[RMDB]
RNA sequence: GGGAACGACUCGAGUAGAGUCGAAAAACAGGUCAUAGCAUUAAUGACCGACAACUACCACUGGGGAGAAGUAGGACCAGGACGCUCUACAAUCGGAUGCCCAGGGAGGGGCUUCCUGUCAUGGGCUGGCCACCAGCAGGAGGUGUCCAGCGUGUGAGCAGUCAUAGGGAUUCGUCCCUAUGACUGCAAAAGAAACAACAACAACAAC
Reactivity to 2A3 in 0.01 (KOAc 150mM, MgCl2 10mM, bicine 150mM(pH8.5), 24C), signal-to-noise 1, nucleotides 027 to 156: a010c100a030g030g020u020c000a000u030a070g050c030a110u180u220a270a020u040g000a000c000c000g020a030c050a110a030c000u100a060c000c020a000c140u100g000g000g000g000a070g060a110a070g040u040a010g000g090a040c000c000a020g140g000a030c030g040c020u000c020u030a080c020a110a220u100c030g000g020a040u090g050c030c020c020a020g010g040g010a030g000g030g010g030c030u000u000c030c010u090g040u050c010a020u070g050g100g050c000u040g020g000c060c000a000c010c010a000g070c040a080g010g200a010g020g010u000g000u000c000c000a020g020c120g070u000g000u000g000a000